[RMDB]
RNA sequence: GGGAACGACUCGAGUAGAGUCGAAAAUGACCGUUGUUGUGCGAUGGGGUUCAUACCUUUAUCUGCCAAAACGGGACCUCUGUUGAGGUAUAACCAAUAUUCCGUACUAAGGAUUUCGGUCCGGAACAUCUUACACAAUGUUCGCAUUGUGUAAGAUAAAAGAAACAACAACAACAAC
Reactivity to DMS in 0.01 (KOAc 150mM, MgCl2 10mM, bicine 150mM(pH8.5), 24C), signal-to-noise 9, nucleotides 027 to 126: u020g010a180c000c010g010u000u000g000u000u010g010u010g030c010g010a030u000g000g000g000g010u000u010c300a120u030a140c010c000u000u000u030a010u000c010u020g050c010c040a010a030a030a000c010g000g000g000a030c000c000u000c020u020g020u020u030g010a020g000g000u000a040u010a090a170c080c050a100a090u020a210u020u010c000c000g010u010a060c120u010a090a130g010g010a150u010u010u020c130g010g010u000c030c010g010g000a040a050c270
Reactivity to 2A3 in 0.01 (KOAc 150mM, MgCl2 10mM, bicine 150mM(pH8.5), 24C), signal-to-noise 9, nucleotides 027 to 126: u150g060a030c000c010g010u000u010g260u090u010g070u090g010c000g010a010u020g020g010g000g010u080u140c090a060u190a180c000c000u020u070u160a030u000c070u160g000c000c000a010a020a000a010c010g000g000g010a010c010c000u000c040u110g250u210u280g010a010g000g020u030a050u070a080a040c010c000a030a020u100a100u160u030c010c000g020u010a020c020u070a070a140g160g000a150u060u080u180c130g030g000u010c030c000g010g000a010a030c030
The data come from the RNA Mapping Database (RMDB), libraries RFM100 and RFMREP. Chemical mapping of a 177-nucleotide RNA with DMS and 2A3. The RNA was probed in 150 mM KOAc, 10 mM MgCl2 and 150 mM bicine (pH 8.5) at 24 C. For 2A3 the reverse transcriptase was SuperScript II with manganese. DMS adducts were read by reverse transcription with MarathonRT.